[RMDB]
RNA sequence: GGGAACGACUCGAGUAGAGUCGAAAACCUUCGCCUGGUUCGUGGCGCCUUGUGACCCCGGGCCCCUGCCGCCUGCAAGUCGAAAUUGCGCUGUGCUCCUGUGCUACGGCCUGUGGCUGGACUGCCUCAUAAAACGACCCUUCGGGGUCGUUUUAUGAAAAGAAACAACAACAACAAC
Reactivity to 2A3 in 0.01 (KOAc 150mM, MgCl2 10mM, bicine 150mM(pH8.5), 24C), signal-to-noise 2, nucleotides 027 to 126: c030c000u040u080c060g040c040c000u060g050g000u100u120c050g040u090g010g000c080g010c030c000u110u120g060u080g030a070c000c000c000c000g020g000g000c000c000c000c040u050g020c000c000g030c000c000u060g030c020a050a060g030u080c000g060a000a130a160u100u050g010c030g000c010u030g010u020g050c000u020c000c040u060g000u050g040c000u050a050c000g020g040c000c000u050g010u040g000g010c000u000g000g060a090c050u110g000c010c000u050
Chemical mapping of a 177-nucleotide RNA with 2A3. It was measured as part of the RMDB library RFM100. 2A3 is a SHAPE reagent: it acylates the 2'-hydroxyl of flexible nucleotides of all four kinds. Values cover nucleotides 27 to 126. 2A3 adducts were read by reverse transcription with SuperScript II with manganese.